[RMDB]
Annotation: The record gives the reactivity of an RNA of 207 nucleotides to 2A3 and DMS. The reactions ran in a buffer of 150 mM KOAc, 10 mM MgCl2 and 150 mM bicine (pH 8.5), at 24 C. It was measured as part of the RMDB library OK3TST.

RNA sequence: GGGAACGACUCGAGUAGAGUCGAAAAUGCAAUCCCAGCUACUCGGGAGGCUGAGACACAAGAAUUGCUUGAACCUGGGAGGUGGAGGUUGCAGUGAACUGAGAUCGUGCCACUGCACUCAGCCUGGGUGACAGAGUGAGACUCUGCCUUUAAAAUACCCUAAAUUUAGUUUCGACUAAAUUUAGGGAAAAGAAACAACAACAACAAC
Reactivity to 2A3 in 0.01 (KOAc 150mM, MgCl2 10mM, bicine 150mM(pH8.5), 24C), signal-to-noise 5, nucleotides 027 to 156: u160g010c020a010a030u050c010c000c030a020g050c020u100a080c040u050c140g030g020g010a010g010g000c030u030g030a000g050a050c050a010c020a120a080g110a220a140u100u110g030c010u040u030g020a020a020c000c000u020g070g010g020a120g160g230u140g030g020a040g050g060u190u100g030c000a010g010u000g020a020a010c020u070g020a020g040a240u250c090g020u040g130c130c000a020c000u000g000c000a000c010u010c000a000g030c000c000u000g010g010g000u040g020a030c030a020g070a000g070u050g010a060g020a020c010u000c020u030g020c000c000u020u120u050a100a070a020a050u160a080
Reactivity to DMS in 0.01 (KOAc 150mM, MgCl2 10mM, bicine 150mM(pH8.5), 24C), signal-to-noise 2, nucleotides 027 to 156: u010g040c070a090a110u000c010c000c000a140g030c010u000a020c040u010c040g040g020g020a150g000g000c020u000g020a030g000a070c050a080c050a040a090g000a120a130u000u010g020c020u000u010g020a080a090c000c020u010g020g020g010a110g030g000u000g000g010a080g040g020u010u020g000c000a050g050u000g010a030a070c030u000g020a190g000a070u000c050g010u000g010c050c000a040c010u000g020c000a060c030u000c010a110g010c020c020u000g010g040g010u020g010a070c020a040g020a040g020u000g000a260g020a300c030u000c000u000g000c010c000u010u000u010a060a050a040a150u020a160